[RMDB]
RNA sequence: GGGAACGACUCGAGUAGAGUCGAAAAAAGAGCGUACCUAGCUGUGUUUCAACCUGCGUGGGUUGGGGCGGCUUAGCGAAUUAAGGCGUUGUUCCACCCUAGUGGUACUUACCCCAUGCAAAGCCUGCAUAGUUUGAGAGUUCGCUCUCAAACUAUGAAAAGAAACAACAACAACAAC
Reactivity to DMS in 0.01 (KOAc 150mM, MgCl2 10mM, bicine 150mM(pH8.5), 24C), signal-to-noise 4, nucleotides 027 to 126: a050a060g000a080g010c090g020u000a050c050c030u000a050g030c030u000g000u000g010u000u010u010c050a060a080c040c020u010g010c190g030u010g010g010g020u000u000g020g000g000g040c020g010g000c050u010u000a050g010c100g010a090a060u010u000a060a050g010g020c040g010u000u000g010u000u000c020c010a040c020c090c060u000a080g020u010g010g010u000a050c030u000u010a120c090c010c010c060a080u000g000c060a080a080a130g010c060c040u000g000
Reactivity to 2A3 in 0.01 (KOAc 150mM, MgCl2 10mM, bicine 150mM(pH8.5), 24C), signal-to-noise 2, nucleotides 027 to 126: a020a000g110a000g020c040g000u010a030c000c000u000a020g000c020u050g000u010g020u110u110u050c080a060a060c040c000u070g070c090g110u220g030g000g000u050u040g030g000g020g000c000g050g000c040u040u030a030g010c040g130a100a110u090u060a120a010g080g000c000g040u020u040g080u150u080c000c000a000c040c030c020u070a080g060u030g090g020u010a020c000u010u080a060c010c040c000c000a020u120g020c010a080a050a050g010c020c000u070g000
This 177-nucleotide RNA was probed chemically with DMS and 2A3. Values cover nucleotides 27 to 126. It was measured as part of the RMDB library VIROID. 2A3 is a SHAPE reagent: it acylates the 2'-hydroxyl of flexible nucleotides of all four kinds.